Background
The record gives the reactivity of an RNA of 207 nucleotides to 2A3. For 2A3, 1,032 sequencing reads were counted. The RNA was probed in 150 mM KOAc, 10 mM MgCl2 and 150 mM bicine (pH 8.5) at 24 C. Reactivities are rounded to 0.1 and cut off at 0 and 3. It was measured as part of the RMDB library RSTRND.

[RMDB]
RNA sequence: GGGAACGACUCGAGUAGAGUCGAAAAAUCGGGAACCGCUACAGGAUGCUUCCUGCCUGUGGUCAGAUCGAACGGAAGAUAAGGAUCGUGCAUUGGGUCGUUUCAGCCUCCGCUCGCUCACGAAAAUUCCAACUGAAACUAAACAUGUAGAAAGCAUACAUAAACUUCCGUUCGCGGAAGUUUAUGUAAAAGAAACAACAACAACAAC
Reactivity to 2A3 in 0.01 (KOAc 150mM, MgCl2 10mM, bicine 150mM(pH8.5), 24C), signal-to-noise 2, nucleotides 027 to 156: a000u090c040g020g020g030a050a020c060c000g040c020u010a000c000a020g000g000a020u070g030c020u020u020c000c020u030g020c000c000u050g000u030g040g070u020c080a060g050a120u070c040g000a020a060c060g020g020a030a000g000a080u050a050a020g070g000a020u040c030g020u050g000c020a060u140u300g000g000g050u050c050g020u030u030u010c000a000g020c000c010u020c020c040g030c020u000c000g030c000u040c000a040c020g050a000a050a050a050u140u060c050c020a020a000c010u040g030a040a010a000c000u060a060a180a000c090a140u120g030u010a020g060a060a080a000g020c010a030u020